The record gives the reactivity of an RNA of 177 nucleotides to 2A3. It was measured as part of the RMDB library 15KREP. For 2A3, 671 sequencing reads were counted.
RNA sequence: GGGAACGACUCGAGUAGAGUCGAAAACUCCAACCUACUGACAAUUCUACAACUGUUAGUGUUACUGUAUCCAGUAACAUGGUUGAAACUGUUGUGGGUCAACUUGAGCAAACUAAUAUGCAUAGUCGCGAUAGCGUCAGUUCGCUGACGCUAUCGCAAAAGAAACAACAACAACAAC
Reactivity to 2A3 in 0.01 (KOAc 150mM, MgCl2 10mM, bicine 150mM(pH8.5), 24C), signal-to-noise 1, nucleotides 027 to 126: c030u050c020c000a050a050c000c010u090a030c050u030g040a010c010a050a180u010u010c000u030a050c000a030a000c000u040g010u080u090a040g000u010g030u030u000a010c000u010g110u140a220u200c180c010a010g020u000a000a000c000a000u060g000g080u030u070g100a030a000a000c020u010g030u010u010g000u010g000g000g000u060c000a070a070c090u060u080g110a100g050c010a040a030a090c010u140a040a230u140a080u080g030c030a010u040a060g050u120c070